[RMDB]
RNA sequence: GGGAACGACUCGAGUAGAGUCGAAAAGCAGCAGGCUUACGAGCCUGCUGCAAUAAAAGCCAGGACGGUCACCUUCGGGGUGGUGACAAGUGUGAUCACUUGGGUGGUGGCUGUGUUUGCGUCUCUCCCAGGAAUCAUCUUUACCAGAUCUUGAAAAUCAUAGUGCUCGAUUCGUCGAGCACUAUGAAAAAGAAACAACAACAACAAC
Reactivity to 2A3 in 0.01 (KOAc 150mM, MgCl2 10mM, bicine 150mM(pH8.5), 24C), signal-to-noise 1, nucleotides 027 to 156: g000c000a000g050c000a000g060g040c000u070u070a020c160g040a000g000c000c000u020g000c000u000g030c000a000a000u000a000a000a000a000g000c020c000a020g010g010a000c020g060g000u020c010a020c020c010u030u120c040g020g090g010g000u030g030g000u040g030a020c020a090a250g190u160g020u020g300a020u000c000a010c020u000u030g190g030g060u030g000g030u010g000g030c000u000g000u020g020u070u040u060g000c060g080u070c000u000c030u000c040c000c000a040g060g050a050a070u100c040a030u030c070u000u100u120a040c050c070a020g020a120u110c030u020u050g060a110a120a060a160
Conditions: 150 mM KOAc, 10 mM MgCl2 and 150 mM bicine (pH 8.5), 24 C. An RNA of 207 nucleotides, treated with 2A3 and read out base by base. Reactivities are given for positions 27 through 156. As a SHAPE reagent, 2A3 marks flexible, mostly unpaired nucleotides at the ribose 2'-OH. For 2A3, 476 sequencing reads were counted.